[RMDB]
Overview: Chemical mapping of a 177-nucleotide RNA with DMS and 2A3. It was measured as part of the RMDB library TTRDEL. Values cover nucleotides 27 to 126. The reactions ran in a buffer of 150 mM KOAc, 10 mM MgCl2 and 150 mM bicine (pH 8.5), at 24 C. DMS adducts were read by reverse transcription with MarathonRT.
RNA sequence: GGGAACGACUCGAGUAGAGUCGAAAAGAUAUGGACCUUCGACGAAGGGGAGAUAUAGGGUCGGAAACGACCCGUAUCGAAGAACCAGAGAAGGUCCUAAGUCAGCACGGAACGUUCGCGUUCCGAACAACUCUCACACGUUCGCGUGUGAGAGUUGAAAAGAAACAACAACAACAAC
Reactivity to DMS in 0.01 (KOAc 150mM, MgCl2 10mM, bicine 150mM(pH8.5), 24C), signal-to-noise 2, nucleotides 027 to 126: g000a030u000a060u010g020g000a020c000c000u000u000c000g000a190c290g000a200a150g000g000g000g000a040g000a020u000a000u000a070g060g010g020u010c010g010g000a030a020a070c000g000a010c020c010c010g020u000a010u000c000g010a110a190g020a120a230c020c000a090g000a150g000a020a000g010g040u000c000c000u000a000a060g000u010c010a110g020c250a090c030g000g000a000a000c000g030u010u020c200g020c010g010u000u000c000c000g000a060a040
Reactivity to 2A3 in 0.01 (KOAc 150mM, MgCl2 10mM, bicine 150mM(pH8.5), 24C), signal-to-noise 1, nucleotides 027 to 126: g010a030u040a010u080g000g010a000c020c000u020u030c040g220a220c090g140a260a300g090g020g020g020a050g000a000u080a010u230a300g000g020g000u020c060g000g000a010a010a000c000g000a010c030c000c000g000u000a000u010c010g040a100a000g030a000a050c050c090a040g020a000g000a160a000g000g000u010c000c000u000a010a010g020u040c000a000g050c090a030c060g000g000a020a020c010g000u100u090c210g020c010g290u000u010c000c000g000a040a010